[RMDB]
Structure probing data (2A3) for a 207-nucleotide construct. Values cover nucleotides 27 to 156. The RNA was probed in 150 mM KOAc, 10 mM MgCl2 and 150 mM bicine (pH 8.5) at 24 C.
RNA sequence: GGGAACGACUCGAGUAGAGUCGAAAAACAUUCACCGAAGAGGAGUCGAUGGAUGUUCAAAUCACGAACAUUGGACUACUUGAAACGCUCACCCGAACAGAGAUUGUUGAAUCAAUUACUGCUGUUGUGGAUAAGUAUCAGCAGAUGCAAGUCCUUCCCUUGGACUCAAAUUCGUUUGAGUCCAAGGAAAAGAAACAACAACAACAAC
Reactivity to 2A3 in 0.01 (KOAc 150mM, MgCl2 10mM, bicine 150mM(pH8.5), 24C), signal-to-noise 1, nucleotides 027 to 156: a010c020a050u020u020c030a000c000c010g030a100a010g090a100g230g010a050g050u030c030g020a030u010g130g000a030u020g030u040u000c070a050a070a160u190c050a050c180g130a140a010c050a090u020u060g020g010a020c000u010a010c030u090u070g040a150a000a030c060g000c010u090c020a140c000c010c010g030a080a020c030a000g050a000g010a140u020u050g050u110u110g070a020a090u090c030a030a020u150u110a070c000u010g020c020u040g000u050u020g050u080g080g060a100u090a170a050g060u070a030u090c000a000g120c020a030g030a040u060g080c050a060a090g070u040c000c090u020u040c000